Chemical mapping of a 177-nucleotide RNA with 2A3 and DMS. For DMS the reverse transcriptase was MarathonRT. For 2A3, 4,955 sequencing reads were counted. The reactions ran in a buffer of 150 mM KOAc, 10 mM MgCl2 and 150 mM bicine (pH 8.5), at 24 C. For DMS, 3,613 sequencing reads were counted.
RNA sequence: GGGAACGACUCGAGUAGAGUCGAAAAGAUCACCUGUUCGCAGGUGAUCAAUCUCCCACUUGAUCGAAGUCUCACAGCCUCGUUGCCCACGAGGCACGGGCGUAUUGAUCCGCUUCGGCGGAUCAAACCUUGAAAGGGUUUUCGAACCCUUUCAAGGAAAAGAAACAACAACAACAAC
Reactivity to 2A3 in 0.01 (KOAc 150mM, MgCl2 10mM, bicine 150mM(pH8.5), 24C), signal-to-noise 4, nucleotides 027 to 126: g000a000u020c000a000c000c000u000g040u030u070c260g020c100a000g000g000u000g000a000u010c000a000a000u010c000u000c000c000c000a030c040u090u190g080a110u150c090g090a120a020g150u000c020u020c070a100c040a020g010c000c010u090c030g090u150u140g060c020c010c000a100c090g020a190g000g000c000a000c000g010g010g000c030g000u020a040u050u050g010a000u010c010c010g010c010u060u040c240g140g000c010g000g020a010u000c000a000a010a010
Reactivity to DMS in 0.01 (KOAc 150mM, MgCl2 10mM, bicine 150mM(pH8.5), 24C), signal-to-noise 4, nucleotides 027 to 126: g000a010u000c010a000c010c000u010g010u000u020c180g030c010a000g020g010u000g010a000u000c000a030a100u010c220u000c010c000c010a140c120u010u000g010a040u010c060g010a090a110g000u000c010u000c040a130c230a130g000c010c010u010c030g010u000u000g010c030c050c050a150c200g000a120g020g000c000a000c090g010g000g020c050g010u010a030u000u000g000a000u000c000c000g020c000u010u020c170g030g000c000g010g000a000u000c010a000a050a100
It was measured as part of the RMDB library M2PK50.